RNA sequence: GGGAACGACUCGAGUAGAGUCGAAAAGAACAUCAGUUCGCUGAUGUUCAAACGCCGAGUAGUGUUGGGUCGCGAAAGGCCAUACAUAAACAUUCACUCAGAAAACAACGUCCUUCGGGACGUUGAACUUAUGUUAGAGCUUCGGCUCUAACAUAAGAAAAGAAACAACAACAACAAC
Reactivity to 2A3 in 0.01 (KOAc 150mM, MgCl2 10mM, bicine 150mM(pH8.5), 24C), signal-to-noise 6, nucleotides 027 to 126: g000a000a000c000a000u000c000a000g020u050u080c150g040c130u000g000a000u000g000u000u000c000a010a020a010c080g040c040c040g000a010g010u010a010g000u000g080u070u080g080g030g050u070c050g030c110g280a170a080a070g020g010c000c000a030u230a060c040a060u220a020a110a000c010a030u050u090c050a010c030u020c020a020g150a060a100a030a030c010a000a010c000g010u000c010c000u030u080c170g080g000g000a010c000g000u000u000g000a000a000
Reactivity to DMS in 0.01 (KOAc 150mM, MgCl2 10mM, bicine 150mM(pH8.5), 24C), signal-to-noise 5, nucleotides 027 to 126: g000a010a010c000a000u000c000a010g010u000u000c240g030c010u000g020a010u000g020u000u000c000a050a100a080c220g010c060c050g000a020g010u000a030g030u000g010u000u000g010g020g020u000c010g020c120g010a100a100a150g000g010c000c020a090u010a090c210a150u000a100a030a020c030a020u000u000c150a030c020u000c020a120g000a070a060a060a210c000a000a010c000g010u000c000c000u010u020c180g010g010g010a000c000g010u000u000g000a040a100

Chemical mapping of a 177-nucleotide RNA with 2A3 and DMS. For 2A3 the reverse transcriptase was SuperScript II with manganese. Reactivities are rounded to 0.1 and cut off at 0 and 3. Reactivities are given for positions 27 through 126.